[RMDB]
RNA sequence: GGGAACGACUCGAGUAGAGUCGAAAAGAUGCAGAGAGGUAUGUCCUAGCUACCCAGAAGGCUGAGAUGGGAGGAUUCCUUGAACCCAGGAGCUCUAGGUUGCAGCAAGCUAUGCCAAUGCACACCACUCAUGGGAUUGUUUCGACAAUCCCAUGAGAAAAGAAACAACAACAACAAC
Reactivity to DMS in 0.01 (KOAc 150mM, MgCl2 10mM, bicine 150mM(pH8.5), 24C), signal-to-noise 2, nucleotides 027 to 126: g010a060u000g020c000a050g010a190g020a070g010g030u010a040u000g000u010c060c020u010a120g000c020u010a070c030c010c050a070g000a080a070g000g020c070u000g000a050g030a050u020g010g000g010a070g000g000a120u010u010c030c030u000u000g000a090a060c030c020c040a110g000g000a110g010c040u010c040u010a090g010g020u000u000g020c050a050g010c120a050a090g010c050u000a100u010g010c020c050a090a100u020g020c010a040c120a070c070c050a290
Reactivity to 2A3 in 0.01 (KOAc 150mM, MgCl2 10mM, bicine 150mM(pH8.5), 24C), signal-to-noise 1, nucleotides 027 to 126: g060a030u060g040c010a000g030a010g020a080g160g000u080a100u160g080u000c000c030u050a070g000c000u030a060c000c000c020a010g050a180a020g100g000c040u020g030a060g010a190u050g010g020g020a050g020g090a100u110u120c020c000u030u120g080a070a050c010c040c000a000g050g080a020g010c020u000c030u050a050g010g050u030u000g020c060a010g040c030a040a030g000c000u130a070u200g000c000c030a060a040u100g000c030a030c000a040c040c010a030

Structure probing data (DMS and 2A3) for a 177-nucleotide construct.
For 2A3 the reverse transcriptase was SuperScript II with manganese.
The reactions ran in a buffer of 150 mM KOAc, 10 mM MgCl2 and 150 mM bicine (pH 8.5), at 24 C.
For DMS the reverse transcriptase was MarathonRT.
For 2A3, 1,192 sequencing reads were counted.
The DMS profile rests on 1,395 reads.